[RMDB]
RNA sequence: GGGAACGACUCGAGUAGAGUCGAAAACAUGACACAUUAUAAAUACUAUGAAGCAAACGUUGAGACCAAUCAAGUUUUAGUAUUACUGCAUGGUUUUCUUAGCGACAGUCGUACUUAUUAUAAUCACCGGAGUAGGUGGAUUCGUCCACCUACUCCGAAAAGAAACAACAACAACAAC
Reactivity to DMS in 0.01 (KOAc 150mM, MgCl2 10mM, bicine 150mM(pH8.5), 24C), signal-to-noise 1, nucleotides 027 to 126: c070a040u000g000a110c020a080c020a070u020u000a060u000a080a050a020u020a030c040u000a040u000g000a090a150g000c160a090a080a050c200g010u000u000g000a110g020a090c230c190a040a070u000c080a010a100g010u040u000u000u000a040g030u000a030u010u000a040c170u000g020c060a100u000g010g000u000u000u000u010c050u030u000a260g000c010g020a210c300a000g000u000c000g020u000a060c000u020u000a090u020u000a030u000a080a020u000c160a190c230
Reactivity to 2A3 in 0.01 (KOAc 150mM, MgCl2 10mM, bicine 150mM(pH8.5), 24C), signal-to-noise 1, nucleotides 027 to 126: c030a060u090g170a030c010a000c000a050u170u100a140u270a120a120a000u030a010c010u010a030u220g060a150a050g050c060a050a080a000c010g100u040u050g000a020g040a130c080c030a060a020u090c000a040a030g020u050u080u080u060a000g040u020a000u040u080a030c040u010g050c010a000u020g040g060u000u010u000u080c000u010u070a050g020c000g020a050c070a000g000u020c000g040u020a080c010u090u080a110u290u020a100u110a010a210u090c010a000c090